[RMDB]
RNA sequence: GGGAACGACUCGAGUAGAGUCGAAAAGAUAUGGACAUCCAGACAUGCUGGGUCGUCGGAAACGACGACACCAGCAACAGCUGGUUGUCCUAAGUCAAAGUCUUCACGUCUUCGGACGUGAAGACAACAACCAAUGUAGCUUCGGCUACAUUGGUUGAAAAGAAACAACAACAACAAC
Reactivity to DMS in 0.01 (KOAc 150mM, MgCl2 10mM, bicine 150mM(pH8.5), 24C), signal-to-noise 3, nucleotides 027 to 126: g000a020u000a230u010g010g000a020c000a010u000c010c000a000g010a060c070a300u000g020c000u000g010g010g010u000c000g020u000c000g000g000a050a050a110c000g020a000c000g010a000c000a080c000c000a020g020c000a020a030c140a120g010c000u000g000g000u000u010g000u000c000c000u000a020a060g010u010c020a140a090a120g010u000c000u010u000c000a000c010g010u000c010u010u010c170g030g010a000c010g000u000g000a000a000g010a000c020a030a100
Reactivity to 2A3 in 0.01 (KOAc 150mM, MgCl2 10mM, bicine 150mM(pH8.5), 24C), signal-to-noise 2, nucleotides 027 to 126: g020a000u040a020u100g000g000a000c000a000u000c000c000a010g020a050c140a260u300g030c000u010g010g010g010u010c000g010u010c000g000g000a180a030a000c010g010a000c000g010a010c010a000c020c000a000g000c000a000a000c010a020g010c000u000g010g000u000u000g000u000c000c000u010a030a010g010u020c040a110a140a000g000u030c000u020u000c000a000c000g010u000c010u060u080c300g110g000a000c000g000u010g000a010a010g000a000c000a000a000

An RNA of 177 nucleotides, treated with DMS and 2A3 and read out base by base. The RNA was probed in 150 mM KOAc, 10 mM MgCl2 and 150 mM bicine (pH 8.5) at 24 C. DMS adducts were read by reverse transcription with MarathonRT. It was measured as part of the RMDB library TTRDEL. Reactivities are rounded to 0.1 and cut off at 0 and 3.